RNA sequence: GGGAACGACUCGAGUAGAGUCGAAAACUCUUAUCGAGAGCGGCAGAGGGACUGGCCCGAUGAAGCCCGGCAACCUAACUUUAUUUAAGCGUAAAGUGAAGGUGCUAAUUCCAGCAAGAUGGUGUAUAAACGACCGUUAACUUCGGUUAACGGUCAACCUUAAUAAGACGUUCGCGUCUUAUUAAGGAAAAGAAACAACAACAACAAC
Reactivity to DMS in 0.01 (KOAc 150mM, MgCl2 10mM, bicine 150mM(pH8.5), 24C), signal-to-noise 3, nucleotides 027 to 156: c010u020c020u000u030a210u000c050g000a060g010a080g000c020g010g030c070a070g000a140g030g020g010a140c050u000g000g000c000c000c010g010a100u020g010a110a150g010c010c010c040g000g020c020a050a040c000c000u000a100a020c000u000u010u000a010u010u010u010a130a190g040c300g040u000a020a010a030g020u000g000a060a030g010g010u000g000c000u010a040a120u000u000c000c000a070g030c060a050a160g020a140u000g010g030u000g020u000a080u010a070a100a120c110g000a020c000c000g020u000u000a000a000c010u000u000c300g040g010u000u000a000a000c020g000g020u000c000a010a020
Reactivity to 2A3 in 0.01 (KOAc 150mM, MgCl2 10mM, bicine 150mM(pH8.5), 24C), signal-to-noise 4, nucleotides 027 to 156: c010u020c000u060u090a120u140c070g020a030g000a020g100c150g030g000c020a010g010a030g030g000g020a030c030u030g040g020c000c000c010g060a110u020g010a010a010g000c000c000c000g000g010c030a090a100c000c000u020a020a000c010u050u010u040a060u060u140u110a170a050g120c050g030u010a010a010a000g000u010g060a140a020g010g000u000g000c000u010a020a020u130u040c010c010a000g020c120a070a060g060a110u130g010g110u100g040u090a060u150a140a180a030c100g000a000c000c000g000u000u000a000a000c000u010u060c120g070g000u000u000a000a000c000g000g010u000c020a000a000
An RNA of 207 nucleotides, treated with DMS and 2A3 and read out base by base.
Reactivities are rounded to 0.1 and cut off at 0 and 3.
Conditions: 150 mM KOAc, 10 mM MgCl2 and 150 mM bicine (pH 8.5), 24 C.
For 2A3, 2,923 sequencing reads were counted.
It was measured as part of the RMDB library M2RFPK.